[RMDB]
RNA sequence: GGGAACGACUCGAGUAGAGUCGAAAACUCGAUCAACUGCGGGCUGCGCCUGGCGAUUAUCUUCCACCCGACUGGUGUCGACUCAGGUAUUACCAGCUUUUCGGGCAACUACAACGCCGACCUGGCGAGCGUGUAGCAAGUUCGCUUGCUACACGCUAAAAGAAACAACAACAACAAC
Reactivity to 2A3 in 0.01 (KOAc 150mM, MgCl2 10mM, bicine 150mM(pH8.5), 24C), signal-to-noise 2, nucleotides 027 to 126: c020u000c040g010a120u060c030a030a130c100u110g050c110g000g010g030c000u080g050c050g030c100c020u010g040g010c010g010a020u040u070a060u110c090u120u000c030c030a050c000c020c010g040a010c020u020g000g000u020g070u050c030g030a100c020u030c160a020g090g040u100a060u070u240a050c000c000a010g030c080u070u080u060u100c000g000g010g020c000a040a020c000u220a080c010a190a000c000g000c000c020g120a270c020c020u070g000g010c010g060
Reactivity to DMS in 0.01 (KOAc 150mM, MgCl2 10mM, bicine 150mM(pH8.5), 24C), signal-to-noise 2, nucleotides 027 to 126: c030u000c040g030a080u020c110a080a110c080u010g010c070g030g010g000c070u000g020c120g010c030c030u010g000g010c030g010a090u000u000a080u000c100u010u000c070c040a140c030c010c020g010a070c040u020g000g000u000g040u010c040g010a040c100u000c110a100g030g010u000a080u000u010a070c020c010a030g010c170u000u010u000u000c040g010g000g010c150a040a080c140u010a060c150a080a160c030g000c010c020g000a070c080c090u010g000g030c020g040

The record gives the reactivity of an RNA of 177 nucleotides to 2A3 and DMS. For 2A3, 1,700 sequencing reads were counted. Source: RMDB library OK2TRN, as collected in RNAgym.